[RMDB]
The record gives the reactivity of an RNA of 177 nucleotides to 2A3 and DMS. The data come from the RNA Mapping Database (RMDB), libraries RFM100 and RFMREP. DMS adducts were read by reverse transcription with MarathonRT. For 2A3 the reverse transcriptase was SuperScript II with manganese. Conditions: 150 mM KOAc, 10 mM MgCl2 and 150 mM bicine (pH 8.5), 24 C.

RNA sequence: GGGAACGACUCGAGUAGAGUCGAAAACAAAAUAAUGAUAACGAGAAUAAUAUCAAGAAUACCUUAGAACAACAUCGACAACAACAACAGGCAUUUUCGGAUAUGAGUCACGUGGAGUAUUCCAGAAUAUGUCUUCCUGUUUCGACAGGAAGACAUAAAAAGAAACAACAACAACAAC
Reactivity to 2A3 in 0.01 (KOAc 150mM, MgCl2 10mM, bicine 150mM(pH8.5), 24C), signal-to-noise 4, nucleotides 027 to 126: c010a000a060a090a080u300a020a140u080g070a030u060a100a000c050g030a000g140a170a000u160a190a040u040a010u060c020a070a080g010a050a030u080a090c030c000u070u100a060g050a090a020c080a040a060c010a080u100c100g110a060c070a140a000c000a050a000c010a010a000c000a050g050g010c050a060u030u020u060u010c010g060g000a000u010a010u100g060a040g050u030c010a000c090g030u040g040g030a080g020u070a120u030u070c010c000a000g050a090a030
Reactivity to DMS in 0.01 (KOAc 150mM, MgCl2 10mM, bicine 150mM(pH8.5), 24C), signal-to-noise 3, nucleotides 027 to 126: c060a030a080a150a040u050a120a080u030g000a030u020a080a070c070g020a050g010a120a100u060a060a080u010a060u000c010a090a120g010a030a020u000a070c060c030u020u010a140g000a060a090c190a090a070c050a080u010c040g020a140c170a040a050c130a030a050c160a050a090c160a000g000g010c070a020u000u020u010u000c090g000g000a060u030a030u000g010a130g000u010c020a000c020g010u010g000g010a070g000u000a070u000u000c010c000a030g030a040a130